[RMDB]
RNA sequence: GGGAACGACUCGAGUAGAGUCGAAAAGAUGGAGACUUCGGUCUCCAUCAAAACAGGACGUGGAGCGGGCUUCGCGGCGCACGACGAUGACGCCCGGGCCGGAAAUCCUUAGGUUCGCCUAAGGAAACGUUAAGACGUUCUUCGGAACGUCUUAACGAAAAGAAACAACAACAACAAC
Reactivity to DMS in 0.01 (KOAc 150mM, MgCl2 10mM, bicine 150mM(pH8.5), 24C), signal-to-noise 1, nucleotides 027 to 126: g010a020u000g000g010a000g000a020c000u010u000c170g040g000u000c020u000c000c010a000u000c000a030a040a160a150c130a070g020g000a040c140g010u010g000g000a140g030c090g010g000g010c010u000u000c030g030c140g000g010c060g000c070a060c110g000a070c220g020a170u000g000a130c040g000c000c000c000g060g000g000c000c010g000g000a030a070a130u000c000c000u000u000a000g000g030u010u030c220g050c010c000u020a000a020g000g000a010a030a070
This 177-nucleotide RNA was probed chemically with DMS. The reactions ran in a buffer of 150 mM KOAc, 10 mM MgCl2 and 150 mM bicine (pH 8.5), at 24 C. Reactivities are given for positions 27 through 126.